[RMDB]
RNA sequence: GGGAACGACUCGAGUAGAGUCGAAAAGACCUUAACUUCGGUUAAGGUCAAAGAGCACUGAGCAGCGAAAGAAACGCUGCAAGCCGCAGUGCACCGCAAUAAAAAGGGUGUUCUUCGGAACACCCAACCGAUAUAUUUGCUUCGGCAAAUAUAUCGGAAAAGAAACAACAACAACAAC
Reactivity to 2A3 in 0.01 (KOAc 150mM, MgCl2 10mM, bicine 150mM(pH8.5), 24C), signal-to-noise 1, nucleotides 027 to 126: g000a000c000c000u000u000a000a000c000u070u080c130g100g000u010u010a000a000g000g010u000c010a000a000a000g000a000g000c000a000c030u020g030a000g020c010a000g000c000g070a120a240a180g200a140a230a030c030g000c000u000g030c000a010a010g000c020c040g070c010a000g000u010g010c010a000c000c040g150c130a050a090u270a240a050a050a030a040g000g000g020u000g000u000u020c020u010u090c220g090g000a010a000c010a000c020c000c000a010a020
Reactivity to DMS in 0.01 (KOAc 150mM, MgCl2 10mM, bicine 150mM(pH8.5), 24C), signal-to-noise 1, nucleotides 027 to 126: g000a020c000c020u000u000a020a010c000u000u000c260g020g000u000u000a020a000g020g020u000c000a000a090a070g010a140g010c000a010c010u000g000a210g000c010a000g000c000g020a110a180a120g000a100a200a120c010g020c010u000g040c000a020a000g000c170c240g010c000a010g000u000g000c000a120c040c010g020c240a090a130u020a030a050a120a110a140g000g020g000u000g000u010u010c000u000u000c200g000g000a000a000c000a000c000c000c000a000a030